[RMDB]
RNA sequence: GGGAACGACUCGAGUAGAGUCGAAAACAUGAGAUCUGAAGAUCGGUCUUCUUAAGGGUUUGGCGCCUCUCACGAGAGCGUAGAUGCUAGCAUCUCGUACCGAUCUUCGCAGUUGGCGCCUAUCUCCCGUAGCUUCACUUUUCGAAGUGAAGCUACGAAAAGAAACAACAACAACAAC
Reactivity to 2A3 in 0.01 (KOAc 150mM, MgCl2 10mM, bicine 150mM(pH8.5), 24C), signal-to-noise 3, nucleotides 027 to 126: c060a100u180g070a060g010a150u110c100u150g000a010a020g000a020u010c000g020g000u040c050u170u030c020u130u160a120a190g020g000g010u060u080u060g020g000c000g010c000c010u030c010u020c010a020c060g030a010g000a010g010c050g070u090a050g030a080u150g060c100u080a050g040c020a160u010c000u000c010g010u010a020c000c010g010a010u000c000u010u000c010g000c000a040g040u110u090g010g000c000g000c020c000u010a060u000c040u020c020c030
Reactivity to DMS in 0.01 (KOAc 150mM, MgCl2 10mM, bicine 150mM(pH8.5), 24C), signal-to-noise 5, nucleotides 027 to 126: c080a110u010g020a090g010a080u000c130u000g010a020a020g000a010u000c020g010g010u010c200u010u000c100u000u010a130a230g000g000g010u000u000u000g010g010c000g010c000c010u000c010u000c050a090c200g010a010g000a040g020c070g000u000a030g010a070u010g010c090u010a120g010c020a060u000c000u000c020g010u010a120c020c010g010a010u000c000u000u000c000g030c140a050g010u010u000g010g010c000g020c010c000u000a080u010c040u000c050c190